[RMDB]
RNA sequence: GGGAACGACUCGAGUAGAGUCGAAAACGUGCGUACUGGGCCGCCGGCACAAUGUUCGACCCAGCCGUCUCAGAGGCCGCGGUUCGACAACGAUCAGCCAGCCGGUCAGCGGGGUCCUCCUAGCUAGGAGGAGUAGGCUGUUCGCAGCCUACUCCUCAAAAGAAACAACAACAACAAC
Reactivity to DMS in 0.01 (KOAc 150mM, MgCl2 10mM, bicine 150mM(pH8.5), 24C), signal-to-noise 1, nucleotides 027 to 126: c190g000u030g030c080g020u000a160c050u000g010g000g000c010c120g030c070c050g000g040c010a080c120a080a240u000g000u020u000c020g000a090c000c010c010a030g000c030c070g020u000c190u000c190a270g010a210g010g010c020c010g030c110g010g000u010u000c010g000a070c110a080a070c100g020a120u010c140a080g010c040c000a080g000c050c050g010g010u030c080a070g040c050g010g000g000g010u000c000c030u000c020c000u000a110g010c090u010a140g010